[RMDB]
Chemical mapping of a 177-nucleotide RNA with 2A3.
The data come from the RNA Mapping Database (RMDB), library OK1LIB.
Values cover nucleotides 27 to 126.
The reactions ran in a buffer of 150 mM KOAc, 10 mM MgCl2 and 150 mM bicine (pH 8.5), at 24 C.
RNA sequence: GGGAACGACUCGAGUAGAGUCGAAAAGCGCGAUGUCCGUCGUGCACAACGUGGCGGCCAGACUGAGAUAACCACCGGUGAGCGCCUUGCCGACGCACAUGAUGUCCGGGCUCACCCCGGCAUGGUCCGAGUCGACGUGCUUCGGCACGUCGACUCGAAAAGAAACAACAACAACAAC
Reactivity to 2A3 in 0.01 (KOAc 150mM, MgCl2 10mM, bicine 150mM(pH8.5), 24C), signal-to-noise 1, nucleotides 027 to 126: g010c010g000c060g060a010u010g070u100c000c090g060u040c030g010u000g150c030a000c050a000a130c060g050u040g040g000c000g040g000c000c000a010g030a080c090u130g030a010g000a300u160a040a080c040c000a000c030c010g030g000u030g070a060g000c060g030c000c000u020u140g010c050c000g000a000c000g180c010a010c030a060u230g010a040u160g160u100c070c020g000g000g010c000u040c060a050c000c000c000c010g000g000c000a070u010g050g000u000c000